[RMDB]
RNA sequence: GGGAACGACUCGAGUAGAGUCGAAAAGACAACCUUCGGGUUGUCAAACUCGCGUACUACAAUCCUACACAUCGAUCUAAUGAACUACAGAUCCCAAAUAGGAUCUGCAUUAGGGAGUUGAGGAUUGUAUCGCUUUGCAUAGAGCUUCGGCUCUAAACGUUUGAUGAAAUUUCGAUUUCAUCAAACGAAAAGAAACAACAACAACAAC
Reactivity to DMS in 0.01 (KOAc 150mM, MgCl2 10mM, bicine 150mM(pH8.5), 24C), signal-to-noise 2, nucleotides 027 to 156: g000a010c000a020a000c010c010u000u010c280g050g040g040u010u000g000u000c000a000a050a100c060u000c060g030c050g070u000a100c070u000a020c030a010a020u000c000c000u000a230c090a300c070a140u000c040g030a300u020c040u020a020a070u010g000a160a250c040u000a120c000a000g000a010u000c000c000c040a070a080a250u000a010g000g010a000u000c000u000g000c000a060u000u000a050g010g040g000a220g000u000u000g000a100g000g010a030u000u000g000u000a010u000c040g010c010u010u010u010g030c060a170u000a050g030a030g030c000u000u000c240g030g020c000u000c010u000a000a070a190
Reactivity to 2A3 in 0.01 (KOAc 150mM, MgCl2 10mM, bicine 150mM(pH8.5), 24C), signal-to-noise 5, nucleotides 027 to 156: g000a000c000a000a000c010c020u060u080c300g110g000g000u000u000g000u000c000a040a000a020c030u040c050g000c000g020u090a130c030u010a010c030a010a010u000c010c010u210a100c060a010c020a190u170c040g060a030u010c040u000a000a000u030g030a090a080c080u150a110c300a000g000a000u010c000c010c050a160a300a110u300a150g000g000a000u000c000u000g000c000a000u010u000a000g000g010g020a050g020u070u100g020a010g010g000a010u010u000g000u010a010u180c010g010c000u060u140u150g030c050a100u040a060g000a000g010c000u060u060c280g120g000c000u000c000u000a010a060a000
Structure probing data (DMS and 2A3) for a 207-nucleotide construct. The 2A3 profile rests on 5,034 reads. For DMS the reverse transcriptase was MarathonRT.